An RNA of 177 nucleotides, treated with DMS and 2A3 and read out base by base. 2A3 is a SHAPE reagent: it acylates the 2'-hydroxyl of flexible nucleotides of all four kinds. Reactivities are given for positions 27 through 126. Conditions: 150 mM KOAc, 10 mM MgCl2 and 150 mM bicine (pH 8.5), 24 C.
RNA sequence: GGGAACGACUCGAGUAGAGUCGAAAACGGCGUCGUCGCGGUGAAGGUGCGGGUCCAGACGCCGUAGGUCUGCGUCCAGGCUGAGCCCUGUGUCGGCUCGGCACCCGGCACUUCGAUGGUGUCCGCACUAAGCCAAUGGCUUCGGCCAUUGGCUUAGAAAAGAAACAACAACAACAAC
Reactivity to DMS in 0.01 (KOAc 150mM, MgCl2 10mM, bicine 150mM(pH8.5), 24C), signal-to-noise 1, nucleotides 027 to 126: c010g000g010c040g020u000c040g000u000c000g010c140g000g000u000g000a300a020g010g010u010g010c090g000g000g020u030c110c070a060g000a020c000g000c020c100g050u000a020g010g020u000c020u000g020c260g000u050c010c000a260g000g040c010u000g000a060g000c000c000c100u020g020u070g070u000c210g000g020c000u000c000g000g000c000a120c080c010c000g050g000c010a010c000u000u000c170g000a000u000g000g030u000g020u000c000c050g000c090a140
Reactivity to 2A3 in 0.01 (KOAc 150mM, MgCl2 10mM, bicine 150mM(pH8.5), 24C), signal-to-noise 2, nucleotides 027 to 126: c000g000g000c000g000u030c000g000u000c010g000c060g060g050u040g010a050a040g050g030u080g060c070g000g040g010u070c030c000a050g010a000c000g000c020c000g000u000a010g000g070u050c010u040g020c020g050u030c040c000a030g090g000c010u070g050a050g050c040c000c020u200g050u090g100u210c050g000g020c010u000c020g060g000c000a000c010c000c000g080g020c000a010c000u050u020c000g030a050u050g020g020u010g030u070c000c020g000c020a070